[RMDB]
RNA sequence: GGGAACGACUCGAGUAGAGUCGAAAAGAUAUGGACGGAACUCGCUUGGAUUUAGAGGAUGCUAUUAGGACUGUGUGGUGAUAUUGUCGGAAACGACAAUGUUUGCCACACAGUCCUAAUAGCAUCCUCUUGUCAGCGAGACUUCCGUCCUAAGUCAUCUACCAUUUGUGUUCGCACAAAUGGUAGAAAAAGAAACAACAACAACAAC
Reactivity to DMS in 0.01 (KOAc 150mM, MgCl2 10mM, bicine 150mM(pH8.5), 24C), signal-to-noise 1, nucleotides 027 to 156: g010a100u000a210u020g000g040a020c000g000g000a030a300c000u000c010g010c020u000u010g030g020a060u020u010u010a010g020a010g020g020a020u000g020c040u000a020u000u000a020g030g000a040c000u030g030u000g020u010g030g030u000g020a000u000a000u000u000g000u010c000g000g020a180a150a300c000g010a030c010a020a010u010g010u020u000u000g080c070c020a010c030a000c000a000g030u010c000c000u000a000a000u000a020g000c000a000u000c000c000u000c000u000u010g010u010c000a030g000c010g030a040g000a020c090u000u010c000c000g010u010c000c000u010a000a060g010u000c040a170
Structure probing data (DMS) for a 207-nucleotide construct. For DMS, 3,923 sequencing reads were counted. The reactions ran in a buffer of 150 mM KOAc, 10 mM MgCl2 and 150 mM bicine (pH 8.5), at 24 C.